RNA sequence: GGGAACGACUCGAGUAGAGUCGAAAAAUCAAUGAUGGCCAGUGGCACAAGGUAAUAGUCCCCUGGAUAUUGGCAGUACCCUAAGGGAAUUACUGAGUGGCAGCCAUCAGCAUUCUCCUGGUGCCAGUAUAUUUUGCCAGGGCAGACACUGACUCUACCGAUUAAAUGGGUUCGCCCAUUUAAUCGGAAAAGAAACAACAACAACAAC
Reactivity to 2A3 in 0.01 (KOAc 150mM, MgCl2 10mM, bicine 150mM(pH8.5), 24C), signal-to-noise 2, nucleotides 027 to 156: a000u080c050a040a080u040g020a000u010g020g000c060c100a200g230u130g120g050c010a000c000a020a010g030g020u000a000a030u020a110g250u080c000c020c000c030u030g020g010a020u040a070u130u150g100g050c020a000g020u020a030c000c030c000u060a120a060g000g050g000a010a000u020u000a000c000u010g020a000g040u050g030g160c020a030g040c000c020a000u000c000a000g030c000a030u050u030c020u040c000c000u040g030g000u070g070c060c060a080g080u060a190u030a130u220u100u240u160g020c000c000a010g000g040g000c020a020g060a040c070a040c140u090g050a070c030u020c030u140a030
Chemical mapping of a 207-nucleotide RNA with 2A3. For 2A3 the reverse transcriptase was SuperScript II with manganese. Reactivities are given for positions 27 through 156. Conditions: 150 mM KOAc, 10 mM MgCl2 and 150 mM bicine (pH 8.5), 24 C. Source: RMDB library OK3TST, as collected in RNAgym.